[RMDB]
RNA sequence: GGGAACGACUCGAGUAGAGUCGAAAAUUGCCAUGUUGCCCAUGCUGGUCUCAAACCCCUGGGCUCAAGUGAUCCACCUGCCUGAGCUUCCUAAAAUGCUGGGAUCACAGGUGUGAGCCACUGUGCCUGGUCUCCAGCAGCCACUUUCAUGUCCGUACAUAUCUACGAGAUUCGUCUCGUAGAUAUGAAAAGAAACAACAACAACAAC
Reactivity to 2A3 in 0.01 (KOAc 150mM, MgCl2 10mM, bicine 150mM(pH8.5), 24C), signal-to-noise 6, nucleotides 027 to 156: u090u050g040c040c030a050u080g030u050u080g080c000c010c010a010u050g000c010u010g000g050u060c080u050c170a160a190a120c030c040c000c020u030g010g010g000c010u000c020a060a030g000u010g010a020u000c000c000a000c000c010u020g040c010c010u100g080a020g030c040u110u120c020c040u200a140a120a030a030u170g010c020u040g000g000g000a020u040c060a010c010a060g040g000u030g040u120g030a020g100c110c000a010c010u040g010u020g010c010c000u030g000g020u020c020u010c020c000a010g000c010a020g000c020c020a060c010u060u200u150c090a080u130g040u060c020c020g030u030a030
Reactivity to DMS in 0.01 (KOAc 150mM, MgCl2 10mM, bicine 150mM(pH8.5), 24C), signal-to-noise 3, nucleotides 027 to 156: u010u010g030c020c060a090u000g020u000u000g020c020c020c050a190u000g020c000u010g020g000u010c020u000c060a070a100a210c030c030c060c050u000g020g020g000c000u000c020a020a050g020u000g020a150u010c020c010a040c010c000u000g030c030c070u000g050a140g030c050u000u010c030c040u010a040a090a140a080u000g030c080u000g010g010g020a120u000c040a100c020a000g010g020u000g020u010g020a080g000c030c020a020c020u000g020u010g020c030c010u020g010g020u010c020u000c010c020a080g020c020a090g000c040c030a070c060u000u000u000c060a110u010g020u000c020c010g000u000a270
Structure probing data (2A3 and DMS) for a 207-nucleotide construct. It was measured as part of the RMDB library OK3TST.